[RMDB]
RNA sequence: GGGAACGACUCGAGUAGAGUCGAAAAGGAUGCAACGUAGUAAUAUGUGUGACAGCUACCUCUUGAGUUACACAUUACUAGUCGUAAUGCGAUUCAAGAGGUAGAUCGCGUUACGACAUCUGUAUCGCUACAACAGUCUAUUCGUAGAUUGUUGUAGAAAAGAAACAACAACAACAAC
Reactivity to 2A3 in 0.01 (KOAc 150mM, MgCl2 10mM, bicine 150mM(pH8.5), 24C), signal-to-noise 4, nucleotides 027 to 126: g040g010a000u010g010c010a050a040c100g070u050a060g020u010a030a090u070a150u260g050u010g010u020g050a080c050a080g100c070u090a090c020c020u100c030u070u120g090a050g040u040u150a020c020a000c010a020u010u020a010c010u040a030g050u030c020g000u010a000a000u000g000c010g000a000u090u140c140a130a000g000a000g090g000u030a030g000a000u000c000g000c000g000u000u000a010c000g010a010c010a020u050c050u000g010u010a010u010c010g000
Reactivity to DMS in 0.01 (KOAc 150mM, MgCl2 10mM, bicine 150mM(pH8.5), 24C), signal-to-noise 2, nucleotides 027 to 126: g010g000a000u000g000c030a020a130c300g010u010a020g000u000a040a060u010a080u010g030u010g010u000g010a050c130a140g000c050u000a050c020c010u000c020u000u000g010a110g010u010u000a050c040a020c010a010u000u000a000c000u000a110g010u000c080g000u000a000a000u000g000c030g000a020u000u000c170a110a100g000a010g000g030u000a110g000a050u000c000g000c060g000u000u000a000c000g010a040c020a060u000c150u000g000u000a020u000c030g000
Annotation:
Chemical mapping of a 177-nucleotide RNA with 2A3 and DMS. It was measured as part of the RMDB library OK2TRN. The DMS profile rests on 12,127 reads. DMS (dimethyl sulfate) methylates the pairing face of unpaired adenines and cytosines.